Notes: Structure probing data (DMS and 2A3) for a 177-nucleotide construct. The 2A3 profile rests on 817 reads. Reactivities are rounded to 0.1 and cut off at 0 and 3. The reactions ran in a buffer of 150 mM KOAc, 10 mM MgCl2 and 150 mM bicine (pH 8.5), at 24 C.
[RMDB]
RNA sequence: GGGAACGACUCGAGUAGAGUCGAAAAGGCGGAGAUGACCAUUCCGCUGUCCAGAAAGAGGAAGGCCGUUAUGCCGGUGCCCGGCGUCGUCGCGGUGAAGGUGCGGGUCCAGACGCCGCCGGCCUGCGUUGUCCGUCCUUUUCGAAGGACGGACAACAAAAGAAACAACAACAACAAC
Reactivity to DMS in 0.01 (KOAc 150mM, MgCl2 10mM, bicine 150mM(pH8.5), 24C), signal-to-noise 1, nucleotides 027 to 126: g010g070c000g010g000a020g000a050u070g000a140c120c100a300u050u000c000c020g060c010u000g000u000c000c000a060g020a000a040a120g010a060g000g020a040a020g000g000c010c090g020u000u000a050u050g040c050c020g010g000u020g020c110c040c050g000g000c000g010u000c000g000u000c030g010c170g010g000u000g010a120a090g010g010u050g000c010g000g010g000u020c000c080a290g020a000c000g000c000c020g000c000c120g030g000c000c090u020g000c270
Reactivity to 2A3 in 0.01 (KOAc 150mM, MgCl2 10mM, bicine 150mM(pH8.5), 24C), signal-to-noise 2, nucleotides 027 to 126: g040g000c030g020g010a010g000a030u090g100a090c060c000a110u000u010c000c000g060c010u010g010u030c000c000a020g210a030a160a000g120a080g220g050a070a190g070g060c020c070g000u120u070a220u210g020c010c000g050g000u000g140c060c040c010g000g000c040g020u020c000g000u000c000g000c090g060g050u160g040a110a030g090g040u140g000c040g010g150g000u000c020c020a040g010a020c000g030c000c010g040c000c000g010g060c010c000u030g020c050